[RMDB]
RNA sequence: GGGAACGACUCGAGUAGAGUCGAAAAGUUGUUCACAGAUGAAGCAGCUGUCCUUCAUCGCACCACGGCUAACUGGUGCUGUGAACAAGUCACGUGAGUCGAUCAGUUAGCCGUCUGAUCGGUCAGAGGACAGCUGAGCUCUGACACUCACGUGUCGGGACUGGCGUAUAUUCGUAUACGCCAGUCCAAAAGAAACAACAACAACAAC
Reactivity to 2A3 in 0.01 (KOAc 150mM, MgCl2 10mM, bicine 150mM(pH8.5), 24C), signal-to-noise 1, nucleotides 027 to 156: g020u000u000g000u040u000c040a010c040a020g020a040u050g070a180a010g020c000a000g000c000u010g000u010c010c010u060u100c110a190u110c100g020c080a060c030c040a000c000g010g000c040u010a000a000c000u010g020g000u030g000c030u050g000u000g000a010a080c020a010a040g190u130c020a010c030g020u000g060a000g060u090c020g030a010u030c000a000g000u000u010a000g000c030c020g000u020c040u030g030a050u090c080g040g080u000c030a030g030a000g040g000a010c010a000g000c000u000g010a000g020c000u020c010u070g030a010c010a010c100u000c030a010c010g020u010g010u000c020g010

The record gives the reactivity of an RNA of 207 nucleotides to 2A3. Reactivities are given for positions 27 through 156. For 2A3 the reverse transcriptase was SuperScript II with manganese.